[RMDB]
RNA sequence: GGGAACGACUCGAGUAGAGUCGAAAAGAUAUGGAUGUGAAAGCAAUACUGGACGUUGAAAUCGGAAACGAUGGAGUCCACUAUUUAAGCACAUCCUAAGUCAAAGGAGGGUCUUCGGACCCUCCAACAUUUUAGCCUAGUUCGCUAGGCUAAAAUGAAAAGAAACAACAACAACAAC
Reactivity to 2A3 in 0.01 (KOAc 150mM, MgCl2 10mM, bicine 150mM(pH8.5), 24C), signal-to-noise 3, nucleotides 027 to 126: g020a020u070a040u160g010g000a020u010g000u000g090a170a100a000g170c080a030a020u010a040c030u020g030g000a010c020g210u300u060g030a020a020a010u010c000g000g040a090a030a000c020g000a010u010g000g010a010g000u010c000c000a000c020u020a040u000u040u040a040a020g020c000a000c000a000u030c000c000u000a140a010g060u030c060a110a060a090g030g010a010g000g000g000u000c020u140u110c300g060g060a000c000c010c030u000c010c000a000a000
Reactivity to DMS in 0.01 (KOAc 150mM, MgCl2 10mM, bicine 150mM(pH8.5), 24C), signal-to-noise 4, nucleotides 027 to 126: g000a040u010a300u010g000g000a020u000g010u000g010a090a060a100g010c300a020a020u000a000c150u010g000g010a010c000g030u000u030g020a100a090a030u000c000g000g000a150a090a150c000g020a010u000g000g000a060g010u010c000c000a010c060u000a000u010u000u000a150a120g010c010a010c000a000u000c010c000u020a060a120g020u010c030a100a110a110g010g000a020g010g000g000u000c000u000u010c230g010g000a030c000c000c000u000c000c000a010a040
The data come from the RNA Mapping Database (RMDB), library TTRDEL. An RNA of 177 nucleotides, treated with 2A3 and DMS and read out base by base. The reactions ran in a buffer of 150 mM KOAc, 10 mM MgCl2 and 150 mM bicine (pH 8.5), at 24 C. Values cover nucleotides 27 to 126.